[RMDB]
The record gives the reactivity of an RNA of 177 nucleotides to DMS. It was measured as part of the RMDB libraries RFM100 and RFMREP. DMS adducts were read by reverse transcription with MarathonRT. Reactivities are given for positions 27 through 126. In probing experiments dimethyl sulfate is read out at A N1 and C N3, which are open when not base-paired.

RNA sequence: GGGAACGACUCGAGUAGAGUCGAAAAACGUCGCGUUACGACGCGACGAAGCAGAAGAAAGAUCUGGAAGUGGGAGACACUUUUACUAUAUAUAGUGGCUCCCACUUCCAGAUCUUUCUCUCUGUAACAGCAGUAUGAUAUUCGUAUCAUACUGCUGAAAAGAAACAACAACAACAAC
Reactivity to DMS in 0.01 (KOAc 150mM, MgCl2 10mM, bicine 150mM(pH8.5), 24C), signal-to-noise 3, nucleotides 027 to 126: a130c010g020u000c000g030c010g010u010u000a100c190g020a030c000g010c010g000a000c000g000a040a080g020c000a000g000a030a010g010a010a010a000g010a010u000c010u000g000g000a020a010g020u000g010g010g010a030g000a020c000a000c000u000u000u010u010a120c130u010a180u040a190u030a060u010a000g020u000g000g000c010u000c000c010c000a000c010u000u000c000c000a000g010a000u000c000u000u000u000c000u000c120u000c000u000g010u000a080a190